[RMDB]
RNA sequence: GGGAACGACUCGAGUAGAGUCGAAAAAGCGUCGACGAACCUUCCAACCUUCCAAAGCAGCAAAAGCUGAACCUUCCAACCUUCCAAUCUACUGGAGAGGAGGAGGAGGAGGAGGAGGAGGAAUUAACAUAAACCGGUAUUUCGAUACCGGUUUAUGAAAAGAAACAACAACAACAAC
Reactivity to 2A3 in 0.01 (KOAc 150mM, MgCl2 10mM, bicine 150mM(pH8.5), 24C), signal-to-noise 2, nucleotides 027 to 126: a000g030c030g060u090c030g030a170c020g030a110a100c000c020u050u010c000c040a130a120c010c000u100u010c040c010a100a110a040g010c030a000g000c020a090a180a180a040g010c030u030g010a110a070c000c000u080u020c010c050a120a090c020c020u090u000c000c020a020a100u060c030u210a100c110u170g000g040a050g020a050g060g010a010g010g010a050g010g020a010g000g000a110g000g040a020g010g080a010g030g030a030g090g110a030a180u230u070a040a100
Reactivity to DMS in 0.01 (KOAc 150mM, MgCl2 10mM, bicine 150mM(pH8.5), 24C), signal-to-noise 4, nucleotides 027 to 126: a050g020c080g010u000c060g010a080c130g040a120a100c030c010u000u000c030c020a080a100c030c020u010u000c010c070a060a100a150g030c000a020g010c050a060a090a070a130g010c000u000g000a050a170c050c010u000u000c000c030a050a130c050c020u020u000c000c020a040a090u000c120u000a050c160u000g000g000a080g010a160g000g000a210g010g000a120g000g010a120g110g000a160g000g000a110g010g000a150g000g010a110g000g000a220a060u010u000a050a170